[RMDB]
RNA sequence: GGGAACGACUCGAGUAGAGUCGAAAAUUCGACCGCCAUUGCGCAAGGCAUCGCCAUGACCAGGCAGGAUACAAAAGAGAGUCGAUAAAUAUUCACGGUGUCCAUACCUGAUAAAUAUUUUAUGAAACUAAGAUCCGAAUUUCGAUUCGGAUCUUAGAAAAGAAACAACAACAACAAC
Reactivity to DMS in 0.01 (KOAc 150mM, MgCl2 10mM, bicine 150mM(pH8.5), 24C), signal-to-noise 2, nucleotides 027 to 126: u010u000c030g000a100c060c070g020c050c040a080u010u010g040c090g010c070a070a040g000g000c040a070u000c090g000c030c030a060u000g000a090c100c030a080g000g010c050a090g000g000a090u000a130c080a080a060a070a150g000a090g000a070g020u010c030g000a110u000a030a040a070u000a040u000u000c040a140c100g000g000u000g010u020c070c050a110u000a240c020c000u010g000a070u010a050a060a070u000a060u000u000u020u000a070u010g000a130a050a140
Reactivity to 2A3 in 0.01 (KOAc 150mM, MgCl2 10mM, bicine 150mM(pH8.5), 24C), signal-to-noise 1, nucleotides 027 to 126: u050u000c040g010a030c000c050g040c070c010a070u100u110g010c030g010c080a090a120g020g040c040a050u070c100g010c000c010a050u070g050a050c000c070a010g000g040c020a040g090g010a040u080a110c000a020a180a050a010g070a020g010a010g070u030c040g000a010u060a140a120a000u110a040u080u080c030a000c050g000g000u050g050u030c050c000a010u050a070c000c010u050g000a080u090a030a070a000u140a090u040u050u120u060a150u150g020a000a020a030